[RMDB]
RNA sequence: GGGAACGACUCGAGUAGAGUCGAAAAUGCAAACUCCUUGGUCACACACACAUACGGCGCGGAAGGCGUGUUUGCUGACGUUUCCAUUCCCUUGUUUCAAUCAUUGGUUAAUCCCUUGAUUCCUUUGCUAGUAUUCAUGGUUCGCCAUGAAUACUAGAAAAGAAACAACAACAACAAC
Reactivity to 2A3 in 0.01 (KOAc 150mM, MgCl2 10mM, bicine 150mM(pH8.5), 24C), signal-to-noise 3, nucleotides 027 to 126: u120g000c020a000a030a070c020u010c010c000u040u080g070g030u060c000a020c000a010c010a000c010a000c010a080u100a210c090g040g000c040g000c020g090g090a050a030g020g010c040g010u070g090u030u060u070g000c000u040g020a040c020g010u010u030u030c010c010a010u030u020c000c000c000u010u050g060u040u040u030c020a030a040u010c010a020u030u030g040g010u050u090a080a080u100c020c020c000u020u060g040a040u140u050c000c020u090u050u070g030
Reactivity to DMS in 0.01 (KOAc 150mM, MgCl2 10mM, bicine 150mM(pH8.5), 24C), signal-to-noise 5, nucleotides 027 to 126: u010g030c100a070a050a100c080u000c030c030u010u010g010g000u010c040a070c050a060c090a040c090a060c090a060u000a080c090g010g000c040g000c050g000g010a090a140g020g000c110g010u000g020u000u000u000g020c030u000g010a200c070g000u010u000u000c020c020a270u000u000c000c010c010u000u000g000u000u000u000c100a040a060u000c030a050u000u000g000g010u000u000a080a110u010c090c010c030u000u000g000a080u010u000c110c050u000u000u000g000
Chemical mapping of a 177-nucleotide RNA with 2A3 and DMS. Values cover nucleotides 27 to 126. High DMS reactivity at an A or C suggests that its Watson-Crick edge is free. For 2A3, 4,963 sequencing reads were counted. DMS adducts were read by reverse transcription with MarathonRT. Source: RMDB library RFMREP, as collected in RNAgym. Conditions: 150 mM KOAc, 10 mM MgCl2 and 150 mM bicine (pH 8.5), 24 C.